[RMDB]
RNA sequence: GGGAACGACUCGAGUAGAGUCGAAAAUCAGAGCCACGCAAGCCUCAGUCGCCAGAUUCAUCUCAAACCUCCCGUUAAUGAUUUAUGGGAGGGUUUCAUCUCCACAUGGACUGCGGAGACCUACUGUCCCUGUUUCUUGAGUGGAAAUAGAAGGUCAACUAAUGGAGUAGUUCGCUACUCCAUUAGUAAAAGAAACAACAACAACAAC
Reactivity to DMS in 0.01 (KOAc 150mM, MgCl2 10mM, bicine 150mM(pH8.5), 24C), signal-to-noise 4, nucleotides 027 to 156: u000c050a130g010a120g000c030c030a080c070g030c030a080a100g010c040c020u000c040a060g020u000c030g010c030c020a110g000a130u010u010c050a080u010c060u010c030a020a040a080c010c020u000c010c000c000g020u000u000a080a130u010g010a180u000u000u000a050u010g020g010g010a040g010g010g010u010u000u000c030a080u000c020u010c020c010a070c030a130u000g000g010a120c070u000g020c020g010g010a060g010a040c030c050u000a070c070u000g020u000c020c030c020u020g010u000u000u000c030u000u000g010a100g010u010g030g000a020a040a110u000a090g010a090a070g020g010u000c040a080
Reactivity to 2A3 in 0.01 (KOAc 150mM, MgCl2 10mM, bicine 150mM(pH8.5), 24C), signal-to-noise 6, nucleotides 027 to 156: u090c020a020g020a020g070c020c010a040c030g030c040a030a050g010c010c010u040c020a020g060u050c040g010c050c000a030g020a070u100u140c060a120u080c100u060c090a110a140a080c010c000u010c020c000c000g010u030u070a100a040u230g140a090u160u150u140a040u060g020g000g010a010g000g000g000u010u080u030c020a020u000c020u020c020c010a050c010a080u110g070g020a030c040u020g000c030g020g010a030g000a040c000c010u060a050c020u050g020u030c000c010c000u010g020u020u040u020c020u030u060g050a070g020u090g000g070a010a060a040u090a030g090a090a020g030g010u030c020a020